[RMDB]
An RNA of 207 nucleotides, treated with DMS and 2A3 and read out base by base. For DMS, 2,670 sequencing reads were counted. The 2A3 profile rests on 1,856 reads.

RNA sequence: GGGAACGACUCGAGUAGAGUCGAAAAAUCAUGUUCGCAUGAUCCGUGACCUUUGUGUGCACCCUCCACGGGAGACCAAAAAGUGCCCAUUGGGCAUACAAAGGUCUUUGAUCGUGGAUGUGCUGCACACUCUGGUUCAAUACUACUUCGGUAGUAAUACAACCUGGAUAUUCGUAUCCAGGUUGUAAAAAGAAACAACAACAACAAC
Reactivity to DMS in 0.01 (KOAc 150mM, MgCl2 10mM, bicine 150mM(pH8.5), 24C), signal-to-noise 1, nucleotides 027 to 156: a090u000c060a050u010g000u000u000c240g010c030a020u000g030a030u010c000c040g040u020g010a030c020c000u000u000u010g050u010g040u020g000c020a130c000c010c010u010c020c040a000c030g020g000g000a020g030a220c000c000a050a160a080a140a240g030u000g010c000c010c020a300u000u030g090g000g000c000a010u010a030c150a100a100a220g020g000u010c000u020u000u010g020a140u000c000g010u000g000g010a060u010g010u010g000c040u000g000c010a040c020a050c020u000c040u000g000g020u010u010c090a090a090u000a010c010u000a020c010u010u020c270g030g000u000a000g000u000a070a300
Reactivity to 2A3 in 0.01 (KOAc 150mM, MgCl2 10mM, bicine 150mM(pH8.5), 24C), signal-to-noise 2, nucleotides 027 to 156: a000u000c000a000u020g030u080u120c290g000c120a000u010g010a040u070c040c100g100u080g020a010c000c000u000u020u000g020u000g000u000g000c000a010c000c010c010u000c000c010a000c010g010g020g000a000g000a000c000c010a000a150a000a050a100g020u010g010c020c020c040a210u260u300g000g000g000c020a010u050a040c170a030a170a020g000g000u000c000u000u010u000g030a020u050c000g000u020g000g010a000u030g080u130g040c090u000g000c000a010c000a000c000u020c000u010g000g000u000u060c000a000a030u010a030c000u000a000c000u030u070c130g090g010u030a010g050u070a070a050